[RMDB]
RNA sequence: GGGAACGACUCGAGUAGAGUCGAAAAUAACUCCUACCAUCGGCUACACACUGCUUGACACAUAUUGUUAGAAGCACCUCGCAUCUGCAAGUUCUCUUAAGCAAAAUACUUGCAUUAGGUCUCAGCUCACUUUUAUGAUCUUCGGAUCAUAAAAGUGAAAAGAAACAACAACAACAAC
Reactivity to DMS in 0.01 (KOAc 150mM, MgCl2 10mM, bicine 150mM(pH8.5), 24C), signal-to-noise 2, nucleotides 027 to 126: u030a150a190c120u000c100c000u010a010c030c010a050u000c030g020g000c000u010a110c160a060c080a050c160u000g030c020u000u000g000a120c050a000c160a080u010a130u000u000g010u000u000a060g000a090a110g030c020a060c110c080u000c060g020c060a070u000c090u000g000c010a000a000g000u000u010c070u000c080u000u000a040a060g010c120a060a060a080a090u000a040c010u000u000g010c030a010u010u010a080g000g000u020c010u000c030a160g000c170u000
Reactivity to 2A3 in 0.01 (KOAc 150mM, MgCl2 10mM, bicine 150mM(pH8.5), 24C), signal-to-noise 3, nucleotides 027 to 126: u050a010a020c020u010c010c010u010a030c010c020a050u050c020g050g000c020u080a030c050a000c010a010c080u030g010c020u050u060g060a020c020a000c020a080u070a060u240u160g050u080u060a070g010a170a020g020c020a020c010c010u040c040g020c020a070u040c010u060g000c010a040a040g010u040u020c050u010c000u090u140a070a010g030c060a030a010a070a090u120a070c020u030u010g030c010a060u020u070a050g010g080u000c010u000c040a010g000c010u020

Chemical mapping of a 177-nucleotide RNA with DMS and 2A3.
For DMS the reverse transcriptase was MarathonRT.
2A3 adducts were read by reverse transcription with SuperScript II with manganese.
It was measured as part of the RMDB library RFMREP.